[RMDB]
RNA sequence: GGGAACGACUCGAGUAGAGUCGAAAAGAUAUGGAUUCCCAAUUAAGCUAUACUACCCACCUAAACUUAGAAAUCGGAAACGAUUUCUAAGUUUAGAGGUAUAGAAAGCAUUGAGAAUCCUAAGUCACAUUCGAAAGAUGUUCGCAUCUUUCGAAUGAAAAGAAACAACAACAACAAC
Reactivity to DMS in 0.01 (KOAc 150mM, MgCl2 10mM, bicine 150mM(pH8.5), 24C), signal-to-noise 2, nucleotides 027 to 126: g000a060u030a300u020g000g000a020u000u010c010c040c000a010a040u000u020a120a170g040c000u000a010u000a060c030u020a030c070c040c170a300c130c000u010a000a010a010c010u010u000a010g000a010a000a000u000c000g000g010a150a150a130c000g010a010u000u000u000c000u000a010a010g010u000u000u000a010g000a060g000g040u000a010u000a010g000a140a040a110g030c300a010u010u000g000a050g000a080a010u000c010c010u000a060a060g000u000c030a160
Chemical mapping of a 177-nucleotide RNA with DMS. The reactions ran in a buffer of 150 mM KOAc, 10 mM MgCl2 and 150 mM bicine (pH 8.5), at 24 C.